[RMDB]
RNA sequence: GGGAACGACUCGAGUAGAGUCGAAAAGUAUUCAGCCUUAACCAUUUCUUUAACGGCUUCUGUGGCUGCUUCGCGCGCUUUUUUCUCUUCAACUUGAACAGCUUUUUGCAGUUGAGCAUUGUACUUAGCCACAAUAUCAGCUUGUAAGUCUGCAUCACCCCUUUUACUGAUUCGUCAGUAAAAGGGGAAAAGAAACAACAACAACAAC
Reactivity to 2A3 in 0.01 (KOAc 150mM, MgCl2 10mM, bicine 150mM(pH8.5), 24C), signal-to-noise 2, nucleotides 027 to 156: g080u080a030u130u160c040a010g060c000c000u130u120a180a110c100c010a240u170u230u100c100u050u180u100a130a000c020g010g000c000u050u020c080u110g090u020g000g020c010u010g050c010u060u120c170g020c090g030c030g040c070u120u080u080u000u130u070c010u060c000u160u100c040a080a090c020u170u190g010a070a010c040a080g110c000u200u160u050u290u300g030c000a040g010u110u090g010a070g000c060a030u040u050g010u040a020c030u160u170a020g030c030c020a000c020a020a000u050a040u070c020a000g040c000u050u280g070u050a010a040g040u070c030u030g010c010a050u120c050a090